[RMDB]
The record gives the reactivity of an RNA of 177 nucleotides to 2A3 and DMS.
RNA sequence: GGGAACGACUCGAGUAGAGUCGAAAAUGAAAAUGAUUAUCAAUACCACAUAGAACAUCCCCCCACAACGUUUCGUUCUUGUUGGAUUGGUCAUUUUCAAAUAUUCCCCUUUUAUAUGCCCGUAAAAUAACAGGGAACUAUUCGUAGUUCCCUGUUAAAAAGAAACAACAACAACAAC
Reactivity to 2A3 in 0.01 (KOAc 150mM, MgCl2 10mM, bicine 150mM(pH8.5), 24C), signal-to-noise 4, nucleotides 027 to 126: u050g000a010a000a000a000u020g010a020u050u090a090u250c010a000a010u050a300c000c000a000c010a030u190a060g000a010a000c010a100u210c030c010c010c010c040c000a070c040a140a150c130g060u090u250u210c020g000u010u000c000u040u030g120u090u070g000g000a010u000u000g000g010u010c000a000u000u000u000u000c010a010a000a020u130a010u020u020c000c000c000c000u000u110u110u080a140u070a030u170g020c000c030c040g120u090a010a060a040a150
Reactivity to DMS in 0.01 (KOAc 150mM, MgCl2 10mM, bicine 150mM(pH8.5), 24C), signal-to-noise 4, nucleotides 027 to 126: u010g020a020a000a000a000u000g000a050u010u030a170u040c010a020a000u000a130c020c000a040c030a010u010a020g010a010a010c000a230u030c050c010c000c010c020c040a100c150a070a110c220g010u010u020u030c150g000u000u000c010u000u000g000u030u010g010g000a070u000u000g000g000u010c010a000u000u000u010u000c020a010a030a100u000a200u010u000c000c010c000c300u010u010u000u000a090u010a050u010g000c030c010c020g000u020a050a070a090a110
DMS (dimethyl sulfate) methylates the pairing face of unpaired adenines and cytosines.
The 2A3 profile rests on 1,661 reads.
The RNA was probed in 150 mM KOAc, 10 mM MgCl2 and 150 mM bicine (pH 8.5) at 24 C.
DMS adducts were read by reverse transcription with MarathonRT.